[RMDB]
RNA sequence: GGGAACGACUCGAGUAGAGUCGAAAAUUAAUUGCCUCGGGUACGGUCACAACGUGAAGGAUGUUCCAAUGGGCAAUCCGCAGCCAAGCCCCUACGUGUAGUGUCUGUAAUACUACAGACAUUUCAUAUGGGGAAGGUUCAGAGACUAAAUGGGUGUGCUAAGGAUAGUGUUCGCACUAUCCUUAGCAAAAGAAACAACAACAACAAC
Reactivity to 2A3 in 0.01 (KOAc 150mM, MgCl2 10mM, bicine 150mM(pH8.5), 24C), signal-to-noise 2, nucleotides 027 to 156: u110u080a000a060u020u040g040c030c010u050c070g040g000g010u050a000c010g040g030u020c040a020c030a150a300c230g030u050g070a060a010g090g050a060u140g000u040u040c010c040a030a140u200g030g000g000c020a000a070u020c010c010g040c050a010g000c020c010a080a040g040c000c010c020c000u040a020c050g000u000g010u020a000g000u010g000u000c000u000g010u000a140a080u070a300c060u040a000c020a000g020a000c000a000u010u000u000c010a000u020a040u140g000g000g000g010a000a010g010g000u060u030c040a030g030a010g040a110c050u130a130a040a150u180g060g080g000u090g000u010
Source: RMDB library RSTRND, as collected in RNAgym. This 207-nucleotide RNA was probed chemically with 2A3. For 2A3, 938 sequencing reads were counted. The reactions ran in a buffer of 150 mM KOAc, 10 mM MgCl2 and 150 mM bicine (pH 8.5), at 24 C.